[RMDB]
RNA sequence: GGGAACGACUCGAGUAGAGUCGAAAACUGCACCUUUGCUAGUGUGUUCAUGAUUGGGAGUAUGAAUUUUACUGUUCAUUGCCUUUGUUUGGGUGACUCCCUGGGAAGAUGGCAUUGUGCUAGUGCCUGAGAAGACAUAAUUCGUUAUGUCUUCUCAAAAAGAAACAACAACAACAAC
Reactivity to DMS in 0.01 (KOAc 150mM, MgCl2 10mM, bicine 150mM(pH8.5), 24C), signal-to-noise 9, nucleotides 027 to 126: c020u000g000c020a020c030c150u000u000u000g020c020u000a060g020u010g020u010g010u000u000c030a100u010g010a160u010u000g010g010g010a030g010u000a080u000g000a020a010u000u000u010u020a130c290u010g000u000u000c010a050u000u010g010c010c000u000u000u010g010u010u010u010g010g010g010u000g010a080c020u000c000c000c000u000g010g000g010a040a060g000a130u000g010g010c010a020u000u000g010u000g000c020u010a030g010u000g000c020c020
Reactivity to 2A3 in 0.01 (KOAc 150mM, MgCl2 10mM, bicine 150mM(pH8.5), 24C), signal-to-noise 9, nucleotides 027 to 126: c000u000g000c010a010c010c110u030u040u080g010c020u030a070g040u080g030u050g090u280u050c060a080u150g180a210u150u180g010g000g010a010g010u080a040u070g020a050a030u050u100u130u240a170c160u080g030u020u020c010a030u050u130g030c010c000u150u110u120g300u160u210u180g050g000g000u010g010a010c000u000c000c010c010u000g030g010g020a030a020g060a080u080g010g000c000a010u010u040g020u010g010c060u080a010g010u010g060c010c010